The data come from the RNA Mapping Database (RMDB), library RFMREP.
This 177-nucleotide RNA was probed chemically with 2A3 and DMS.
The DMS profile rests on 1,561 reads.
Values cover nucleotides 27 to 126.

RNA sequence: GGGAACGACUCGAGUAGAGUCGAAAACCGAAAGGCGACGCUAAUCUCCGAAACUCGGUCGUAGUUCGGAUUGCGGAUUGAAACUCAUCCGCAUGAAGCUGGAUUCGGUAGUAAUCGCGCCUCAGAACUAUUACGUCCUGUUCGCAGGACGUAAUAGAAAAGAAACAACAACAACAAC
Reactivity to 2A3 in 0.01 (KOAc 150mM, MgCl2 10mM, bicine 150mM(pH8.5), 24C), signal-to-noise 3, nucleotides 027 to 126: c000c000g030a110a060a010g030g000c020g000a200c000g160c070u090a060a080u120c010u010c020c010g000a040a040a050c080u050c080g040g100u090c050g230u110a040g070u090u170c040g010g030a030u000u020g000c000g000g010a020u050u200g100a150a100a040c070u040c060a020u000c000c000g010c000a000u010g020a020a010g000c030u060g020g030a060u040u000c000g030g020u070a010g010u020a060a060u070c010g000c000g010c020c000u020c030a090g040a090a040
Reactivity to DMS in 0.01 (KOAc 150mM, MgCl2 10mM, bicine 150mM(pH8.5), 24C), signal-to-noise 2, nucleotides 027 to 126: c020c010g020a110a150a050g010g020c010g000a090c020g020c120u000a170a160u000c010u010c010c010g000a040a080a080c080u010c040g050g010u000c150g010u000a090g020u000u010c050g010g000a130u000u000g000c000g010g020a010u010u000g000a110a140a110c280u000c050a010u000c010c010g000c010a000u000g000a290a080g000c020u000g000g000a100u000u000c060g000g010u010a030g010u010a140a110u000c060g010c020g000c030c010u000c140a080g010a080a140